RNA sequence: GGGAACGACUCGAGUAGAGUCGAAAACUCGAAAGAGACCUGCAUAUCUUAGGCAGAUGACCAAGUCUCGUCUGAAAAGCGAAAGCCCUAAGAUAUGCAGCUGUGACGACUUGGCGCAGAAAAUAAAAAUCAUAUACGUGUUCGCACGUAUAUGAUUAAAAGAAACAACAACAACAAC
Reactivity to DMS in 0.01 (KOAc 150mM, MgCl2 10mM, bicine 150mM(pH8.5), 24C), signal-to-noise 7, nucleotides 027 to 126: c020u000c010g000a090a110a140g000a040g000a150c270c000u000g000c000a010u000a000u000c000u000u000a000g010g010c030a010g010a010u000g000a050c140c020a020a020g000u000c030u000c000g010u000c010u010g000a160a090a120a140g020c020g000a110a090a170g010c010c010c000u000a010a010g010a010u000a000u010g020c000a000g000c030u020g010u000g000a060c160g000a000c010u000u010g010g010c020g010c020a040g000a140a070a100a060u060a030a080a080
Reactivity to 2A3 in 0.01 (KOAc 150mM, MgCl2 10mM, bicine 150mM(pH8.5), 24C), signal-to-noise 9, nucleotides 027 to 126: c000u000c000g030a020a060a010g080a010g040a090c010c000u000g000c000a000u000a000u000c000u000u000a000g010g000c000a000g000a030u010g010a010c040c010a010a000g040u010c060u010c070g060u000c020u020g110a240a210a110a030g020c030g040a080a020a010g010c000c000c000u000a000a000g000a000u000a000u000g000c000a000g000c000u010g000u030g030a060c090g000a000c000u010u010g010g000c000g000c010a020g150a050a110a030a020u300a040a070a030